[RMDB]
RNA sequence: GGGAACGACUCGAGUAGAGUCGAAAAACCUGUAUUAUGUACAGGGUGGCAGAUGGCGUGCCAUAAAUCUAUUAGUGGGAUACCACGCUUGUGGACCUUAUGCCCACACAGCCAUCCUCUAGUAAGUGGGAAUGUACCAUUUCGAUGGUACAUUCCCAAAAGAAACAACAACAACAAC
Reactivity to 2A3 in 0.01 (KOAc 150mM, MgCl2 10mM, bicine 150mM(pH8.5), 24C), signal-to-noise 2, nucleotides 027 to 126: a000c000c000u000g030u000a100u260u040a090u300g040u000a040c040a000g040g000g020u020g000g000c050a040g000a080u020g000g000c010g000u000g000c020c000a000u030a000a180a050u100c210u140a070u090u030a090g010u010g010g000g000a030u100a130c080c000a010c020g040c080u120u300g000u000g000g070a080c050c050u140u160a060u220g120c000c000c000a000c000a000c000a010g030c010c000a000u000c020c000u060c010u040a130g020u050a170a010g070u110
Structure probing data (2A3) for a 177-nucleotide construct. For 2A3 the reverse transcriptase was SuperScript II with manganese. The data come from the RNA Mapping Database (RMDB), libraries RFM100 and RFMREP.